Chemical mapping of a 177-nucleotide RNA with DMS and 2A3. The reactions ran in a buffer of 150 mM KOAc, 10 mM MgCl2 and 150 mM bicine (pH 8.5), at 24 C. The 2A3 profile rests on 4,230 reads.
RNA sequence: GGGAACGACUCGAGUAGAGUCGAAAAUAUGUCCAGGGCUUCACACAUACAACAAUGGCCAGUACAGAGGGCCGCGAGACCGUGAGGUGGAGCAAAUCCCUUAAAGCUGGUCUCAGUUCGGAUCGGGAGAAAUUUUGUAAUUCGUUACAAAAUUUCUAAAAGAAACAACAACAACAAC
Reactivity to DMS in 0.01 (KOAc 150mM, MgCl2 10mM, bicine 150mM(pH8.5), 24C), signal-to-noise 6, nucleotides 027 to 126: u050a080u030g000u000c040c020a040g000g000g020c030u000u010c030a060c070a010c010a020u010a030c020a010a000c020a020a010u000g000g000c000c000a000g010u000a000c020a030g000a080g000g000g000c300c210g000c030g010a300g010a040c040c020g010u070g010a110g000g000u000g000g000a300g000c050a030a120a170u010c000c000c000u010u010a030a080a300g000c000u000g000g010u000c010u000c130a120g000u010u000c070g010g000a130u000c020g020g000g050
Reactivity to 2A3 in 0.01 (KOAc 150mM, MgCl2 10mM, bicine 150mM(pH8.5), 24C), signal-to-noise 2, nucleotides 027 to 126: u160a070u060g070u020c010c010a020g000g020g000c000u020u060c010a020c000a000c000a050u020a000c010a000a010c010a010a010u010g010g000c000c000a000g020u020a010c010a070g040a000g000g010g000c010c010g000c000g000a000g020a010c000c000g020u030g060a050g000g010u020g040g010a000g000c010a030a000a000u040c010c000c000u020u050a070a030a010g010c010u010g000g000u000c000u010c010a010g000u030u060c010g030g010a030u040c010g010g000g030